[RMDB]
RNA sequence: GGGAACGACUCGAGUAGAGUCGAAAACUUAUGGCGGAGUAGUACCACAAGGAAUGACGCAAGCACAAUAUACUGAAUUAGAGAAAACUUUACCCCAAUUAAGCGCUGGCAGUAAUAUGCAAGACUAAGUAGUGUCUAUCUUCGGAUAGACACUACUAAAAGAAACAACAACAACAAC
Reactivity to 2A3 in 0.01 (KOAc 150mM, MgCl2 10mM, bicine 150mM(pH8.5), 24C), signal-to-noise 4, nucleotides 027 to 126: c030u060u150a050u140g050g000c030g020g010a040g080u080a000g020u060a190c020c000a090c040a080a040g010g060a100a060u130g010a000c060g010c040a010a020g050c000a040c060a120a100u180a020u070a130c100u110g080a090a080u110u180a050g020a000g060a110a090a020a000c010u090u040u120a080c000c000c000c000a050a070u150u130a080a010g030c020g000c080u020g020g000c030a030g060u080a020a100u070a080u240g010c070a110a000g010a060c010u090a040
Reactivity to DMS in 0.01 (KOAc 150mM, MgCl2 10mM, bicine 150mM(pH8.5), 24C), signal-to-noise 3, nucleotides 027 to 126: c020u000u010a060u060g010g010c060g010g020a150g000u020a070g010u010a110c050c020a040c170a080a100g010g000a050a100u020g000a120c110g000c050a090a100g000c090a050c030a090a130u020a050u010a080c070u010g000a050a080u010u010a080g010a120g000a080a060a060a110c040u010u010u020a100c000c000c000c050a070a110u010u020a030a080g010c040g030c000u000g000g020c060a010g010u000a100a060u030a010u000g000c040a030a070g000a090c050u030a050